[RMDB]
Chemical mapping of a 177-nucleotide RNA with 2A3 and DMS.
It was measured as part of the RMDB library OK1LIB.
For 2A3 the reverse transcriptase was SuperScript II with manganese.
RNA sequence: GGGAACGACUCGAGUAGAGUCGAAAAGACGGUCAUGGUAGAGACCGAGUAAGCGCACAUAGAAAGCCGUCAGAACAGAUAGAAGUGUGCAACUGCGCUGAACGAAGUGCAGAGACUGACGAGAAGAGAUCACCCUAGUGUUCGCACUAGGGUGAUCAAAAGAAACAACAACAACAAC
Reactivity to 2A3 in 0.01 (KOAc 150mM, MgCl2 10mM, bicine 150mM(pH8.5), 24C), signal-to-noise 3, nucleotides 027 to 126: g080a060c000g000g000u000c010a040u170g140g040u230a050g000a000g000a130c000c000g000a010g040u060a130a090g050c050g000c030a000c000a000u130a040g150a060a060a040g080c000c000g000u000c010a000g010a060a080c050a000g140a110u160a080g210a110a020g040u030g020u000g010c040a010a000c000u000g000c000g000c000u010g030a200a010c190g090a030a000g000u000g000c000a000g000a000g060a040c030u020g000a000c010g020a050g010a150a030g130a010
Reactivity to DMS in 0.01 (KOAc 150mM, MgCl2 10mM, bicine 150mM(pH8.5), 24C), signal-to-noise 2, nucleotides 027 to 126: g000a070c070g020g000u040c020a090u060g010g000u030a090g050a120g010a030c030c000g040a240g000u000a100a120g000c040g000c000a020c060a100u000a080g000a140a080a080g000c060c000g000u000c000a000g010a160a030c270a090g010a200u030a070g000a110a170g060u000g030u000g070c000a130a090c000u000g000c000g000c000u000g000a080a050c210g010a050a040g060u000g020c030a000g000a100g000a090c020u000g000a030c010g000a130g000a090a100g000a110